The record gives the reactivity of an RNA of 177 nucleotides to DMS and 2A3. The reactions ran in a buffer of 150 mM KOAc, 10 mM MgCl2 and 150 mM bicine (pH 8.5), at 24 C. For 2A3 the reverse transcriptase was SuperScript II with manganese. The data come from the RNA Mapping Database (RMDB), library TTRDEL.
RNA sequence: GGGAACGACUCGAGUAGAGUCGAAAAGAUAUGGAGCUGUCACAGGGAGCUCAGUCGGAAACGACGAGCAUCGAUCUGUGCAGCUCCUAAGUCAAAAGCACUUGAGAGCUUCGGCUCUCAAGUGCAAGUACCAAGCUUAGUUCGCUAAGCUUGGUACAAAAGAAACAACAACAACAAC
Reactivity to DMS in 0.01 (KOAc 150mM, MgCl2 10mM, bicine 150mM(pH8.5), 24C), signal-to-noise 3, nucleotides 027 to 126: g000a030u000a200u010g000g000a010g030c000u000g000u010c020a010c010a010g030g030g020a060g030c000u000c000a050g030u000c000g000g000a030a020a080c000g000a010c000g000a010g020c000a180u000c070g010a040u010c000u010g020u000g000c000a010g010c000u000c010c000u000a000a040g010u000c020a090a070a120a130g000c000a000c010u000u000g010a020g000a010g010c000u000u020c240g020g010c000u000c000u000c000a000a000g020u000g020c040a000a030
Reactivity to 2A3 in 0.01 (KOAc 150mM, MgCl2 10mM, bicine 150mM(pH8.5), 24C), signal-to-noise 4, nucleotides 027 to 126: g010a020u030a020u080g000g010a020g030c000u060g110u300c070a010c000a010g300g130g000a010g010c030u040c180a050g010u000c000g020g000a030a020a010c010g000a010c000g000a010g020c010a220u140c030g170a200u080c000u000g000u000g000c000a000g010c000u000c000c000u000a000a000g000u000c000a000a000a050a080g000c000a010c000u010u010g010a000g000a010g000c010u070u100c300g080g010c000u000c000u000c000a000a000g000u010g000c010a000a000